[RMDB]
RNA sequence: GGGAACGACUCGAGUAGAGUCGAAAACGAUGAGGGGAGAAGAGAAGUGGACAGGUGGGUCGAAGACGCCCGCCCCACGGCGUACGCCCGUCGCCUGUUUGCAUGCGGGGGUCAGACCCCCUUACCGAAUAAAUAGCUCGUUCGCGAGCUAUUUAUUAAAAGAAACAACAACAACAAC
Reactivity to 2A3 in 0.01 (KOAc 150mM, MgCl2 10mM, bicine 150mM(pH8.5), 24C), signal-to-noise 1, nucleotides 027 to 126: c030g090a130u150g000a090g000g010g000g000a050g010a110a050g000a030g000a220a010g020u100g070g040a060c100a030g000g000u140g010g090g010u100c020g030a150a020g010a020c080g180c010c000c020g030c000c030c020c000a020c060g000g030c000g000u020a060c030g050c010c020c000g000u010c010g010c000c030u100g060u160u090u170g050c040a000u160g070c060g000g000g060g060g000u000c020a040g050a080c000c010c020c000c040u000u030a050c000c000g000
Reactivity to DMS in 0.01 (KOAc 150mM, MgCl2 10mM, bicine 150mM(pH8.5), 24C), signal-to-noise 3, nucleotides 027 to 126: c060g000a080u010g010a060g010g010g020g010a070g010a090a080g000a060g010a070a090g030u010g010g010a080c180a060g010g020u010g010g010g000u000c020g030a130a150g000a050c100g000c000c010c030g020c020c090c090c040a040c130g010g000c010g000u010a060c080g000c070c080c090g000u010c090g000c010c020u010g010u010u000u000g020c090a080u010g020c090g000g010g000g010g010u010c050a130g000a250c030c010c000c000c000u000u000a040c040c080g000